[RMDB]
RNA sequence: GGGAACGACUCGAGUAGAGUCGAAAAGCCAGACCAGUGUGUUUUGGCCCGGCCGGGGGCCGUGUUAUCGAUGCCUUCAUCCAGCUCCGCCCCCGCCCGGAUUGGUGCCGUCGUGCGCUGAAGGCGGCCGAGCGUACUCGUUCGCGAGUACGCUCGGAAAAGAAACAACAACAACAAC
Reactivity to DMS in 0.01 (KOAc 150mM, MgCl2 10mM, bicine 150mM(pH8.5), 24C), signal-to-noise 1, nucleotides 027 to 126: g060c000c000a040g010a000c070c020a170g060u030g030u000g010u000u000u050u030g020g010c040c000c000g050g000c220c000g060g000g000g000g010c100c300g030u000g000u000u000a080u030c260g060a120u020g000c170c150u000u000c000a050u010c050c100a110g000c050u000c080c300g000c000c000c020c000c000g000c300c000c020g000g000a170u000u000g000g030u000g070c030c000g000u000c140g040u010g010c080g070c080u030g000a040a100g040g000c000g000g010